[RMDB]
RNA sequence: GGGAACGACUCGAGUAGAGUCGAAAAGCCGGGCCGGGUCAAGACCCGGCUGGCCGCGGCGAUUGGCGAUAAGGUCGCCGCCGACAUCGCCGCGGCCGCACUGCUGGACACCCUGGAUGCGGUGGCCCAUCUAACUCUGGUUCGCCAGAGUUAGAUGAAAAGAAACAACAACAACAAC
Reactivity to 2A3 in 0.01 (KOAc 150mM, MgCl2 10mM, bicine 150mM(pH8.5), 24C), signal-to-noise 1, nucleotides 027 to 126: g010c010c020g040g070g000c010c030g040g060g020u070c100a110a020g060a130c010c000c000g000g000c000u000g000g050c030c000g040c000g020g000c050g000a060u140u250g070g060c070g040a080u000a140a180g110g020u010c020g010c030c010g010c020c000g010a010c000a030u000c000g000c000c000g000c000g000g000c000c020g010c000a010c010u040g000c020u040g060g050a000c010a110c130c000c030u070g230g010a140u180g020c030g030g000u000g000g000c000c000
Reactivity to DMS in 0.01 (KOAc 150mM, MgCl2 10mM, bicine 150mM(pH8.5), 24C), signal-to-noise 2, nucleotides 027 to 126: g030c010c070g030g020g030c000c010g030g040g010u000c170a140a190g010a150c020c000c000g030g020c010u000g010g000c000c020g020c000g010g000c010g000a020u020u010g030g030c000g010a040u010a110a130g010g000u000c020g000c010c020g020c070c040g010a080c070a060u000c000g030c000c000g060c000g010g000c020c000g010c150a030c080u000g000c030u000g000g000a170c230a160c020c000c070u010g000g020a100u020g010c060g000g000u000g000g000c020c020